[RMDB]
RNA sequence: GGGAACGACUCGAGUAGAGUCGAAAAACUCAUACCAUACGUGGUAUGAGAAGACGAAGACGUUCGUCACCGUAGAAGUCAGCUGGUUUCAUAACUACGGAUAAGCGUGCAUAUACGUAUGCACGCAUGAAGUCCGCAGAUUCGUCUGCGGACUUCAAAAAGAAACAACAACAACAAC
Reactivity to 2A3 in 0.01 (KOAc 150mM, MgCl2 10mM, bicine 150mM(pH8.5), 24C), signal-to-noise 3, nucleotides 027 to 126: a000c000u000c000a010u010a000c010c010a000u030a060c300g130u040g000g020u000a020u000g020a000g030a000a020g020a000c030g000a040a010g130a100c120g100u080u020c020g010u020c020a000c010c000g000u000a000g020a160a000g080u120c090a050g060c110u290g010g110u020u040u010c070a080u070a150a010c010u050a030c020g040g040a040u050a210a070g000c000g000u010g010c020a000u000a000u010a010c220g080u000a040u010g000c000a000c010g020c000a000
Reactivity to DMS in 0.01 (KOAc 150mM, MgCl2 10mM, bicine 150mM(pH8.5), 24C), signal-to-noise 1, nucleotides 027 to 126: a080c000u010c000a040u000a000c010c010a010u060a160c090g060u010g000g010u000a000u000g000a070g000a040a000g000a020c000g030a000a020g000a100c280g000u020u000c000g000u000c010a260c010c000g000u000a020g020a070a060g040u010c120a050g000c010u030g010g010u000u010u000c000a110u000a170a140c080u000a000c000g000g030a120u030a070a100g040c000g000u010g000c000a010u000a000u030a200c220g130u040a040u000g000c000a000c000g000c030a000
The record gives the reactivity of an RNA of 177 nucleotides to 2A3 and DMS. For 2A3, 1,368 sequencing reads were counted. For DMS, 1,445 sequencing reads were counted.